[RMDB]
RNA sequence: GGGAACGACUCGAGUAGAGUCGAAAAGUGGAGGCGAAAGUCACCCUCCUCGCAUCGCAAGUUCGUGCUUGCGACUUACACGUAGGGCGAGGGGUGGGAGAAAGUUGCCAUGAGACCGUAACUUUCGAUGAGGCGGGACUGUUCGCAGUCCCGCCAAUCUUGUGCAUUGAUUCGUCAAUGCACAAGAAAAAGAAACAACAACAACAAC
Reactivity to 2A3 in 0.01 (KOAc 150mM, MgCl2 10mM, bicine 150mM(pH8.5), 24C), signal-to-noise 3, nucleotides 027 to 156: g070u050g000g030a000g000g020c030g040a130a060a020g060u090c060a050c010c000c000u020c000c000u000c000g010c000a050u040c000g000c000a000a000g000u220u290c160g240u300g100c020u030u000g000c000g000a010c000u050u170a060c090a010c080g160u140a110g010g180g000c010g020a000g060g010g020g000u230g020g010g020a120g020a010a010a010g010u000u030g010c000c000a020u080g010a030g030a070c030c030g010u030a020a040c010u020u030u040c020g070a080u100g060a060g030g000c000g000g000g000a000c010u010g040u050u130c230g010c080a000g000u000c000c000c030g010c010c000a000a000
Reactivity to DMS in 0.01 (KOAc 150mM, MgCl2 10mM, bicine 150mM(pH8.5), 24C), signal-to-noise 1, nucleotides 027 to 156: g010u000g000g010a100g040g010c040g000a050a010a060g000u010c060a050c020c010c010u010c000c000u000c010g040c100a150u000c000g000c010a040a020g000u010u010c300g040u030g030c000u000u000g030c000g000a020c040u000u000a120c170a100c090g020u000a050g000g000g010c040g030a010g000g000g030g000u010g000g030g000a210g000a020a020a100g010u010u010g030c000c070a200u000g010a120g030a150c100c120g020u000a050a060c030u000u000u000c000g000a150u010g000a170g000g000c020g040g020g010a070c000u000g000u000u010c210g000c040a020g020u000c000c000c000g000c000c010a000a040